[RMDB]
About this RNA:
An RNA of 177 nucleotides, treated with 2A3 and read out base by base. The reactions ran in a buffer of 150 mM KOAc, 10 mM MgCl2 and 150 mM bicine (pH 8.5), at 24 C.
RNA sequence: GGGAACGACUCGAGUAGAGUCGAAAACAAACAAUAUCCGGUCAUCGCCAGCAUCGACCAGGUCGUCGUCAACGGCGCGCACGCCGAGGCCAAUGUCACCACUUUCAUGGCGUUCGAUCCCCAGGUCUCCCGCAACCGCAUUCGUGCGGUUGCGGGAAAAAGAAACAACAACAACAAC
Reactivity to 2A3 in 0.01 (KOAc 150mM, MgCl2 10mM, bicine 150mM(pH8.5), 24C), signal-to-noise 1, nucleotides 027 to 126: c020a000a240a000c000a030a070u160a080u160c080c030g000g000u050c000a090u030c050g000c000c000a030g000c000a080u030c000g000a000c110c120a030g000g100u180c000g020u010c000g150u140c060a020a090c040g000g000c000g020c000g030c070a050c100g020c030c000g000a060g000g060c040c020a030a000u060g000u000c070a000c020c000a090c070u000u200u140c030a060u060g000g000c080g020u080u080c010g000a150u100c000c000c000c050a000g000g080u000c050